[RMDB]
RNA sequence: GGGAACGACUCGAGUAGAGUCGAAAAGAUAUGGACGUACGCUAGCUGGUAUCGGAAACGAUAUCAUCAGCUUGGACCGACGUCCUAAGUCAAAACUCUGUAUACGUGUUCGCACGUAUACAGAGAAGAGCUUAACUGCGUUCGCGCAGUUAAGCUCAAAAGAAACAACAACAACAAC
Reactivity to DMS in 0.01 (KOAc 150mM, MgCl2 10mM, bicine 150mM(pH8.5), 24C), signal-to-noise 1, nucleotides 027 to 126: g010a020u000a300u000g000g010a000c000g000u010a060c000g000c000u000a000g020c010u000g120g040u000a000u010c030g010g020a150a090a190c040g040a010u000a050u010c180a170u000c160a030g010c010u030u000g000g000a160c030c020g000a040c000g030u000c000c000u030a000a200g000u010c040a140a060a030a120c020u000c000u000g000u000a010u010a000c000g010u010g120u010u010c110g010c010a000c010g020u000a000u000a020c000a000g000a000g000a000a030
Reactivity to 2A3 in 0.01 (KOAc 150mM, MgCl2 10mM, bicine 150mM(pH8.5), 24C), signal-to-noise 1, nucleotides 027 to 126: g030a010u060a030u180g000g010a010c020g000u180a000c030g000c020u020a020g000c000u040g000g000u010a000u000c000g030g010a040a040a010c040g000a000u050a010u030c040a130u080c050a040g000c010u030u060g070g000a170c130c270g030a000c010g020u010c000c000u000a110a020g030u060c030a000a000a030a160c000u000c000u000g000u000a000u010a000c000g010u010g030u050u120c300g000c120a000c000g010u010a010u000a010c000a000g000a000g000a010a000

Structure probing data (DMS and 2A3) for a 177-nucleotide construct. For DMS the reverse transcriptase was MarathonRT. For 2A3, 2,512 sequencing reads were counted.